[RMDB]
RNA sequence: GGGAACGACUCGAGUAGAGUCGAAAAACGGUGCGAUACGUCGCACCGAGACCCUUCCGGAGGGCCCCCCCCAAUCCUGUUGUGCUGGAUUCAGAGGGUUGGGCGGAGGCUUUCCUGAAGGCUCUAAGUGGGAAUAAUGAUUCGUCAUUAUUCCCACAAAAGAAACAACAACAACAAC
Reactivity to DMS in 0.01 (KOAc 150mM, MgCl2 10mM, bicine 150mM(pH8.5), 24C), signal-to-noise 3, nucleotides 027 to 126: a160c020g000g020u000g000c030g020a020u000a070c150g010u000c000g050c000a000c010c020g020a030g000a080c230c000c000u010u000c010c100g010g020a010g000g010g020c010c000c010c000c030c020c020c010a000a020u000c010c000u000g020u030u030g020u010g020c110u020g010g000a140u020u020c010a040g000a040g000g000g020u010u000g000g000g000c150g040g000a060g000g000c000u000u020u000c010c000u010g000a020a000g000g010c160u010c020u010a070a210
Reactivity to 2A3 in 0.01 (KOAc 150mM, MgCl2 10mM, bicine 150mM(pH8.5), 24C), signal-to-noise 7, nucleotides 027 to 126: a000c010g000g000u000g010c010g010a020u020a050c240g100u010c000g010c000a000c000c000g000a000g000a000c010c000c000u000u000c010c020g000g000a000g010g010g000c000c000c000c000c000c000c000c000a010a000u010c010c000u090g120u300u060g050u140g110c160u210g070g200a270u180u090c010a020g010a010g050g000g000u000u000g000g000g000c060g000g000a050g000g000c000u010u000u010c000c000u000g000a000a000g010g000c000u010c010u030a180a050